[RMDB]
RNA sequence: GGGAACGACUCGAGUAGAGUCGAAAAUCGCGGGGUAACGAUGGCGAUCAGGAUGAAGCUGGGCACUACUAGCAGCAGAUCGACCACCCACAUCAGUGUCCGGUCCCGCCAGCCGCCGAAAUAUCCCCCUAUUGCCUAAAUUCGUUUAGGCAAUAGGAAAAGAAACAACAACAACAAC
Reactivity to 2A3 in 0.01 (KOAc 150mM, MgCl2 10mM, bicine 150mM(pH8.5), 24C), signal-to-noise 6, nucleotides 027 to 126: u050c030g000c060g010g010g000g060u090a090a080c120g100a170u060g020g000c020g010a050u070c110a070g090g020a050u110g180a100a030g040c010u060g000g010g000c020a010c030u130a020c010u040a060g030c020a010g020c010a020g030a170u120c050g060a080c030c010a050c020c040c000a040c000a060u150c070a010g020u010g010u010c010c000g010g010u030c020c000c020g000c000c010a020g030c000c020g050c020c040g020a040a040a020u160a080u060c000c000c010
Reactivity to DMS in 0.01 (KOAc 150mM, MgCl2 10mM, bicine 150mM(pH8.5), 24C), signal-to-noise 8, nucleotides 027 to 126: u000c050g020c060g010g000g000g010u010a070a140c170g010a120u000g010g020c020g010a100u000c150a150g010g010a150u010g010a120a110g010c020u000g010g010g010c040a030c040u000a150c160u010a080g020c040a040g010c050a060g000a070u000c080g000a110c050c060a090c030c020c030a100c160a070u010c100a040g020u000g000u000c020c000g000g000u000c040c040c030g010c010c030a130g000c040c010g000c030c030g010a020a040a090u000a110u010c000c000c000

Annotation: The record gives the reactivity of an RNA of 177 nucleotides to 2A3 and DMS. Conditions: 150 mM KOAc, 10 mM MgCl2 and 150 mM bicine (pH 8.5), 24 C. Source: RMDB library OK2TRN, as collected in RNAgym. For DMS, 11,360 sequencing reads were counted.